RNA sequence: GGGAACGACUCGAGUAGAGUCGAAAACGCGCCGUCACCGAGGUGCCGGUUGGUCUCCCGGGCGAGGGCGGCGGGAUAGUCGGCGGCCAGUUCGGGGUCGGCGCCGUCGUCGAAUCGCAGGGUGAUAGUGCCUAAUACUAUUCGUAGUAUUAGGCACAAAAGAAACAACAACAACAAC
Reactivity to 2A3 in 0.01 (KOAc 150mM, MgCl2 10mM, bicine 150mM(pH8.5), 24C), signal-to-noise 5, nucleotides 027 to 126: c020g010c010g000c000c010g010u020c010a010c020c010g030a060g030g030u050g000c010c000g070g000u070u090g100g030u020c010u020c010c010c000g030g170g020c080g040a110g030g100g010c020g030g050c050g000g000g010a080u090a060g030u030c010g000g030c000g040g140c030c010a070g170u160u120c030g010g000g000g010u010c000g000g010c010g000c000c000g020u030c010g010u000c020g030a100a060u080c030g010c050a030g030g040g010u050g040a090u080a150
Reactivity to DMS in 0.01 (KOAc 150mM, MgCl2 10mM, bicine 150mM(pH8.5), 24C), signal-to-noise 6, nucleotides 027 to 126: c110g010c040g010c000c000g000u000c000a040c010c010g000a080g030g020u010g010c010c010g010g000u010u010g030g020u000c050u000c010c000c000g010g020g010c040g010a110g020g000g010c020g000g010c040g010g010g010a050u010a070g010u000c010g010g000c010g010g020c020c050a180g010u010u000c050g000g000g010g010u000c000g000g000c000g010c020c030g000u000c090g010u000c020g010a070a090u000c030g010c040a150g000g000g010u000g010a100u000a110